[RMDB]
RNA sequence: GGGAACGACUCGAGUAGAGUCGAAAACCACAAUCAAAAAUGAGUGCCAGUAAAGAUUCUUCUGCGAUUUUCAUGACUGAUACUCCAAACAAAAUUAAAAAUAAGAUCAACAGGCAUGCUUUCUCUGGAGGUGGCGCUACAAUCGAAAUCCACCGUACACUAAUUUACGCUUCGGCGUAAAUUAGUGAAAAGAAACAACAACAACAAC
Reactivity to 2A3 in 0.01 (KOAc 150mM, MgCl2 10mM, bicine 150mM(pH8.5), 24C), signal-to-noise 1, nucleotides 027 to 156: c000c020a060c060a060a170u280c100a070a250a030a080a090u120g020a020g050u010g000c040c000a020g090u180a020a040a100g070a110u220u080c020u050u010c070u120g040c060g030a050u000u000u110u190c020a010u110g070a000c020u030g030a020u060a090c030u010c080c010a040a150a100c040a040a110a080a050u150u290a130a070a140a040a020u100a030a070g040a050u050c010a020a030c020a030g000g000c000a010u020g010c020u000u060u030c020u000c010u040g100g010a020g000g060u010g010g000c020g000c030u030a090c090a160a050u060c070g030a060a150a030u040c070c010a000c000c000g090u080a000